[RMDB]
RNA sequence: GGGAACGACUCGAGUAGAGUCGAAAAAUCCGCGACCGAAGACAGCAGGGGCCUUGACGCUUAAUCAGCCUGCCGAGGUUGGCACAUGGGAAGUACGCCUCCAGGCUUUUUCCCUUUGCGCCUCGCUGUGCGGGGCGCUUUUCGAAGCGCCCCGCACAAAAGAAACAACAACAACAAC
Reactivity to 2A3 in 0.01 (KOAc 150mM, MgCl2 10mM, bicine 150mM(pH8.5), 24C), signal-to-noise 1, nucleotides 027 to 126: a000u040c020c020g000c040g020a060c020c050g040a060a030g050a020c070a000g020c000a000g010g000g010g030c000c000u060u080g040a120c080g020c000u000u010a080a000u100c090a000g120c010c040u020g000c000c010g000a000g020g010u120u160g300g030c000a050c010a070u090g000g000g000a000a000g080u050a020c090g040c000c010u050c150c080a110g000g000c000u030u010u000u050u000c010c000c000u000u020u000g000c020g000c000c010u000c000g010c000u040